[RMDB]
Chemical mapping of a 177-nucleotide RNA with DMS and 2A3. 2A3 adducts were read by reverse transcription with SuperScript II with manganese. Source: RMDB library OK1LIB, as collected in RNAgym. For DMS the reverse transcriptase was MarathonRT. The DMS profile rests on 1,277 reads. As a SHAPE reagent, 2A3 marks flexible, mostly unpaired nucleotides at the ribose 2'-OH.
RNA sequence: GGGAACGACUCGAGUAGAGUCGAAAAAUAAUCGUUUGAAACGUUUAUUAGAUUUAGGUGCACCUGGUAUCAUCGUUCAAAACGAAAAACGUAUGUUACAAGAAGCCGUUGACGCUUUAAUUGAUAACAGGGUUCUUUGAUUCGUCAAAGAACCCUGAAAAGAAACAACAACAACAAC
Reactivity to DMS in 0.01 (KOAc 150mM, MgCl2 10mM, bicine 150mM(pH8.5), 24C), signal-to-noise 1, nucleotides 027 to 126: a030u000a060a040u020c070g020u000u010u000g000a150a050a120c020g000u000u000u070a050u000u050a120g010a160u000u000u040a070g000g020u000g000c080a100c070c000u000g020g060u000a020u000c060a060u000c020g020u000u000c200a080a110a000a110c110g000a020a120a000a000a030c020g000u000a020u000g000u030u020a040c060a110a130g000a040a030g000c000c070g020u050u000g020a140c180g000c010u000u000u000a030a030u030u000g000a100u000a140a190
Reactivity to 2A3 in 0.01 (KOAc 150mM, MgCl2 10mM, bicine 150mM(pH8.5), 24C), signal-to-noise 2, nucleotides 027 to 126: a000u050a050a000u030c030g030u060u080u220g220a250a150a000c000g000u040u040u000a050u020u060a020g090a150u000u200u200a100g000g100u110g030c050a040c050c000u030g060g000u020a000u080c010a000u020c020g020u040u050c020a050a050a180a110c070g150a100a000a020a000a000c070g060u100a050u150g010u000u000a060c020a070a020g120a020a000g020c040c100g060u130u140g080a050c000g000c030u020u030u010a130a110u040u110g170a030u060a080a060